The record gives the reactivity of an RNA of 177 nucleotides to DMS. DMS adducts were read by reverse transcription with MarathonRT.

RNA sequence: GGGAACGACUCGAGUAGAGUCGAAAAUACGCCAGGCGUUUGAGGCCACUGGGAAGUCGGUAGCAACGUUGGCUUUCCCGCGUUACCGGCAAUCAGUAGCCGCCGACAUAGCUGCAGAGGCGCUGCAAGUCAGUACCGGAUUCGUCCGGUACUGACUAAAAGAAACAACAACAACAAC
Reactivity to DMS in 0.01 (KOAc 150mM, MgCl2 10mM, bicine 150mM(pH8.5), 24C), signal-to-noise 2, nucleotides 027 to 126: u010a140c140g040c000c010a180g020g040c100g000u000u000u020g020a140g010g010c000c020a030c060u000g000g000g000a300a130g010u000c010g030g000u000a030g020c030a090a130c120g010u000u020g050g030c240u000u000u010c070c000c030g010c170g010u000u000a040c010c000g000g000c030a040a210u000c030a030g020u000a080g000c030c020g030c100c060g000a080c120a050u020a120g020c070u000g000c060a170g030a150g010g000c060g000c060u000g020c160a120